This 207-nucleotide RNA was probed chemically with 2A3 and DMS.

RNA sequence: GGGAACGACUCGAGUAGAGUCGAAAAAAAACUACACUUUUCUCUCAACUUGAACCUUGUGCCUAAAGAAGGCUUUAGAUGAAAAUACUCCAGUAGUACUAAGAAUAUGUGAAUAUUCCAUAUGAGUGUACAGGAGGGCUUAUUUAUCAGUGUUCCACAGUGACUAAAUGUUCGCAUUUAGUCACUGAAAAGAAACAACAACAACAAC
Reactivity to 2A3 in 0.01 (KOAc 150mM, MgCl2 10mM, bicine 150mM(pH8.5), 24C), signal-to-noise 2, nucleotides 027 to 156: a000a000a000a000c190u220a070c060a050c080u050u060u100u020c040u000c010u000c020a040a090c020u060u100g060a060a070c000c010u060u110g080u060g120c050c010u140a180a110a120g080a110a030g040g020c020u020u020u130a010g020a030u060g020a060a030a030a050u050a060c010u020c000c020a040g050u150a020g030u010a120c040u060a050a090g000a170a040u020a000u040g130u080g040a090a050u120a160u300u010c010c010a030u010a050u080g100a060g080u090g020u040a010c010a010g010g010a000g020g000g000c040u120u030a040u150u150u020a050u030c020a020g050u030g000u110u000c020c010a020
Reactivity to DMS in 0.01 (KOAc 150mM, MgCl2 10mM, bicine 150mM(pH8.5), 24C), signal-to-noise 1, nucleotides 027 to 156: a060a000a010a020c130u050a050c090a040c070u000u000u000u020c020u000c020u010c040a080a100c030u000u000g010a060a080c040c050u010u010g020u000g020c130c040u010a110a080a100g010a130a040g020g010c040u000u000u000a060g000a120u010g010a180a040a040a090u020a040c010u010c010c000a160g010u000a090g040u010a040c060u000a180a070g020a080a010u000a010u000g040u010g000a180a060u000a010u000u020c000c050a120u000a130u000g020a140g010u020g030u000a020c050a150g000g000a080g020g000g030c040u000u000a060u020u000u000a070u000c100a040g000u000g010u010u010c000c000a170
Overview
For DMS the reverse transcriptase was MarathonRT. The reactions ran in a buffer of 150 mM KOAc, 10 mM MgCl2 and 150 mM bicine (pH 8.5), at 24 C. The DMS profile rests on 1,714 reads.